[RMDB]
RNA sequence: GGGAACGACUCGAGUAGAGUCGAAAAAGGUAUAGGAAUUCCAGUAACAACUCUUGCUAAGGUAACUAACAUAGAUGUAAUUCAACUUAGUUAUGCAGUAGGAUUACAGUUAUCAGUUCUAAUAGUACGAUACCCAUGAGUUCGCUCAUGGGUAUCGAAAAGAAACAACAACAACAAC
Reactivity to 2A3 in 0.01 (KOAc 150mM, MgCl2 10mM, bicine 150mM(pH8.5), 24C), signal-to-noise 1, nucleotides 027 to 126: a020g130g010u110a040u170a080g020g080a040a070u090u000c030c020a000g010u000a010a010c010a020a020c010u000c000u020u050g060c020u060a050a060g160g010u010a010a010c000u010a030a000c010a040u190a060g110a010u080g090u120a130a120u030u020c010a000a010c020u040u010a030g030u040u020a030u170g140c050a010g010u000a000g040g000a030u070u000a040c020a030g010u000u030a080u100c020a030g040u010u000c010u020a100a200u020a050g110u030a060
Reactivity to DMS in 0.01 (KOAc 150mM, MgCl2 10mM, bicine 150mM(pH8.5), 24C), signal-to-noise 2, nucleotides 027 to 126: a100g000g000u000a060u000a190g000g020a100a080u000u000c070c080a190g000u020a040a050c050a060a090c170u000c010u000u000g020c030u030a060a120g030g000u010a010a040c040u000a060a070c100a120u020a160g010a090u000g000u010a020a090u000u000c000a040a110c130u000u000a060g000u000u000a030u020g020c180a040g000u000a000g000g010a010u000u000a030c080a170g000u000u000a040u010c120a050g010u000u000c030u010a110a090u000a110g000u000a090